[RMDB]
RNA sequence: GGGAACGACUCGAGUAGAGUCGAAAACUCUGGAACCCACCCGAGAGGCAUUUCUCGUCAAUCUAUAUCGCACUGUGCAAGCCAGCAGUCGCCUUCCCGUCGUCGACCCGCGCCGUUCCAGCUUCCAUAAGGAGUAGUAAUUCGUUACUACUCCUUAAAAAGAAACAACAACAACAAC
Reactivity to DMS in 0.01 (KOAc 150mM, MgCl2 10mM, bicine 150mM(pH8.5), 24C), signal-to-noise 9, nucleotides 027 to 126: c050u010c020u000g010g010a090a110c040c030c030a120c100c040c020g000a060g010a070g000g010c090a060u010u010u010c020u000c030g010u020c100a080a070u020c080u010a070u020a070u010c070g000c050a070c060u000g010u000g010c070a090a100g000c040c030a090g010c060a050g010u010c050g010c040c040u010u000c020c010c010g010u000c060g010u000c040g000a090c040c020c020g010c050g010c030c010g010u000u000c020c020a070g010c080u000u000c030c040a160
Reactivity to 2A3 in 0.01 (KOAc 150mM, MgCl2 10mM, bicine 150mM(pH8.5), 24C), signal-to-noise 9, nucleotides 027 to 126: c020u020c010u020g030g040a060a050c000c000c020a030c010c020c020g080a050g010a020g080g050c090a090u040u110u020c030u020c020g090u050c030a050a100u020c060u100a080u030a060u230c050g040c030a040c050u050g020u080g070c030a060a050g030c010c020a020g010c010a020g040u060c030g010c000c010u040u050c020c010c000g040u040c020g020u010c010g030a100c000c010c000g030c010g010c020c000g010u030u000c000c000a010g010c030u080u010c020c000a020

Source: RMDB libraries RFM100 and RFMREP, as collected in RNAgym. An RNA of 177 nucleotides, treated with DMS and 2A3 and read out base by base. The reactions ran in a buffer of 150 mM KOAc, 10 mM MgCl2 and 150 mM bicine (pH 8.5), at 24 C. DMS (dimethyl sulfate) methylates the pairing face of unpaired adenines and cytosines. For 2A3 the reverse transcriptase was SuperScript II with manganese.